[RMDB]
RNA sequence: GGGAACGACUCGAGUAGAGUCGAAAAAGAAAUAAGGGAUAUGGAGGACGGAACCCUAUGAAGAGCUCUACCCACCUCGGAAACGAGAGGAGCUUGGAGGGUCCGUCCUCCUAAGUCGGGCAGUGAAUCUCAAGAUCAAGUUCGCUUGAUCUUGAGAAAAAGAAACAACAACAACAAC
Reactivity to DMS in 0.01 (KOAc 150mM, MgCl2 10mM, bicine 150mM(pH8.5), 24C), signal-to-noise 2, nucleotides 027 to 126: a060g010a100a050a030u030a060a070g040g010g000a020u000a120u010g000g000a020g000g000a010c000g000g000a040a070c000c000c000u000a260u030g000a110a240g000a000g000c000u020c000u000a130c150c100c080a170c230c000u000c000g000g000a050a050a110c000g010a010g000a140g010g000a000g000c010u000u000g000g000a010g010g010g010u000c010c000g000u000c000c000u000c000c000u000a000a040g000u000c020g000g020g000c160a080g000u000g010a090a130